Background: This 207-nucleotide RNA was probed chemically with 2A3 and DMS. The RNA was probed in 150 mM KOAc, 10 mM MgCl2 and 150 mM bicine (pH 8.5) at 24 C. Reactivities are given for positions 27 through 156. 2A3 adducts were read by reverse transcription with SuperScript II with manganese.

RNA sequence: GGGAACGACUCGAGUAGAGUCGAAAAACGACUAGUCUUCGGACGUAGGGUCAAGCGACUCGAAAUGGGGAGAAUCCCUCCGGGAUUGUGAUAUAGUCUGGACUGCAUGGUAACAUGCAGCAGUUCAUAAGAGAACGGGUUGAGAAUUAGCGAGCUCGAUAUUUACGGACUUCGGUCCGUAAAUAUCAAAAGAAACAACAACAACAAC
Reactivity to 2A3 in 0.01 (KOAc 150mM, MgCl2 10mM, bicine 150mM(pH8.5), 24C), signal-to-noise 2, nucleotides 027 to 156: a000c030g030a020c010u020a010g000u000c010u030u040c190g110g020a030c060g090u080a110g150g000g000u010c040a030a050g080c000g040a020c020u020c040g010a000a020a140u260g000g000g000g000a040g010a030a100u060c000c000c000u030c000c010g060g010g030a040u060u030g010u060g120a020u070a020u070a180g070u010c010u010g040g110a180c010u000g020c010a000u000g000g020u130a060a090c000a010u000g010c000a000g000c000a000g000u070u010c020a040u060a160a040g030a020g010a160a050c020g030g000g000u090u190g040a040g020a100a070u110u070a070g060c070g040a030g020c080u050c050
Reactivity to DMS in 0.01 (KOAc 150mM, MgCl2 10mM, bicine 150mM(pH8.5), 24C), signal-to-noise 1, nucleotides 027 to 156: a040c020g020a040c020u000a030g000u000c010u010u020c240g030g010a000c010g000u000a090g020g000g000u000c010a300a180g000c000g000a030c000u010c010g010a090a140a160u010g040g000g010g010a150g010a140a100u000c000c020c000u000c000c020g020g010g000a090u000u000g030u000g020a150u000a130u000a100g020u000c060u000g060g000a120c000u020g010c000a000u000g010g010u000a200a250c000a000u010g020c000a000g040c010a050g000u000u000c030a100u000a060a150g000a220g000a040a060c000g020g000g000u000u000g020a120g000a120a100u010u000a140g010c100g010a090g020c060u010c050